[RMDB]
RNA sequence: GGGAACGACUCGAGUAGAGUCGAAAACGAUAGUGGGUAGAUUUGGCUCAGGUAAAGCUAAAGUUAGAUCUAAGUUCAGCUGAGAUGAUGAGGAUGCCAUGGGUUGCUUAGCUUGAGUAAUGGACGGCAUCUCGGUUCUAUUCGUAGAACCGAGAUGAAAAGAAACAACAACAACAAC
Reactivity to DMS in 0.01 (KOAc 150mM, MgCl2 10mM, bicine 150mM(pH8.5), 24C), signal-to-noise 4, nucleotides 027 to 126: c080g000a090u010a060g020u000g010g000g010u010a040g000a080u000u000u000g010g020c020u000c060a070g010g010u010a070a080a110g000c000u010a020a070a090g000u000u000a070g010a070u000c050u010a030a110g000u000u010c080a050g000c050u020g010a120g000a060u000g010a100u000g000a060g010g000a060u000g010c050c060a090u000g010g010g010u000u010g010c040u010u000a120g010c060u000u010g000a060g010u000a040a080u000g000g020a110c140g010g000
Reactivity to 2A3 in 0.01 (KOAc 150mM, MgCl2 10mM, bicine 150mM(pH8.5), 24C), signal-to-noise 2, nucleotides 027 to 126: c050g010a040u070a060g080u120g000g030g020u030a040g040a200u080u040u090g030g000c020u010c070a030g010g050u110a000a050a040g010c030u080a080a000a040g050u060u070a040g020a100u000c000u080a100a020g080u110u070c050a020g000c060u030g030a100g010a150u100g030a040u090g040a020g060g000a020u060g020c040c020a040u060g000g010g060u040u000g020c020u040u010a040g010c000u000u090g010a010g020u030a120a000u120g050g040a020c030g010g000